Chemical mapping of a 207-nucleotide RNA with DMS and 2A3. 2A3 is a SHAPE reagent: it acylates the 2'-hydroxyl of flexible nucleotides of all four kinds. For 2A3 the reverse transcriptase was SuperScript II with manganese. The 2A3 profile rests on 1,351 reads.

[RMDB]
RNA sequence: GGGAACGACUCGAGUAGAGUCGAAAAACUCUCAGUUCGGAUUGUAGGCUGAAACUCGCCUACAUGAAGCUGGAGUUACUAGUAAUCGCAGAUCAGAAUGCUGCGGUGAAUGCGUUCCCGGGUCUUGUACACACCGCCCGUCACACCACGGGAGUUACCUCGUAAAAUGGUUCGCCAUUUUACGAGGAAAAGAAACAACAACAACAAC
Reactivity to DMS in 0.01 (KOAc 150mM, MgCl2 10mM, bicine 150mM(pH8.5), 24C), signal-to-noise 1, nucleotides 027 to 156: a040c000u000c000u000c010a030g000u020u010c120g000g000a250u010u000g020u000a010g030g010c000u020g060a180a210a180c170u030c170g020c000c010u000a010c010a000u000g010a300a170g020c000u000g000g000a040g000u000u000a030c090u000a090g020u000a100a060u000c000g110c000a030g020a050u000c020a300g030a170a130u020g010c020u020g020c020g010g020u000g020a060a170u000g020c060g010u000u000c000c020c000g000g010g000u010c020u000u000g000u000a030c110a130c040a270c050c030g030c000c000c020g000u000c000a080c200a160c080c040a070c010g000g020g000a060g010u020u000a150
Reactivity to 2A3 in 0.01 (KOAc 150mM, MgCl2 10mM, bicine 150mM(pH8.5), 24C), signal-to-noise 3, nucleotides 027 to 156: a010c020u040c030u060c050a020g030u200u240c030g000g000a010u010u000g020u010a010g020g000c010u060g030a090a010a010c130u120c100g000c010c000u000a000c000a000u000g000a000a010g020c010u000g000g000a020g000u010u000a030c020u020a000g000u000a000a010u010c020g000c000a000g020a020u090c060a140g220a290a110u300g020c010u010g000c000g000g000u000g000a010a040u060g030c000g030u010u000c000c010c000g010g000g010u020c070u010u230g060u120a040c090a020c010a030c040c050g040c000c000c020g050u080c070a090c050a040c190c000a000c020g000g000g000a010g010u020u090a090